Source: RMDB library TTRDEL, as collected in RNAgym. Structure probing data (DMS) for a 177-nucleotide construct. The RNA was probed in 150 mM KOAc, 10 mM MgCl2 and 150 mM bicine (pH 8.5) at 24 C.
[RMDB]
RNA sequence: GGGAACGACUCGAGUAGAGUCGAAAAGAUAUGGACAAUCCACUGACGCUUGGACCUCGGAAACGAGCUAGCGUCUGUGGAGUUGUCCUAAGUCAAAGAGGAACACUGCUUCGGCAGUGUUCCUCAAUCUGAAUGUGGUGUUCGCACCACAUUCAGAAAAAGAAACAACAACAACAAC
Reactivity to DMS in 0.01 (KOAc 150mM, MgCl2 10mM, bicine 150mM(pH8.5), 24C), signal-to-noise 1, nucleotides 027 to 126: g000a030u000a300u000g000g020a000c000a000a020u010c000c000a000c000u000g000a020c020g000c010u000u000g040g000a070c300c010u000c010g000g010a110a040a160c000g020a030g000c020u000a020g000c020g000u000c000u000g000u010g000g000a040g000u000u000g020u000c000c020u000a030a060g000u000c030a080a080a190g010a000g000g000a030a010c000a000c000u000g000c000u000u010c200g030g020c020a030g000u030g010u000u000c000c000u010c000a000a000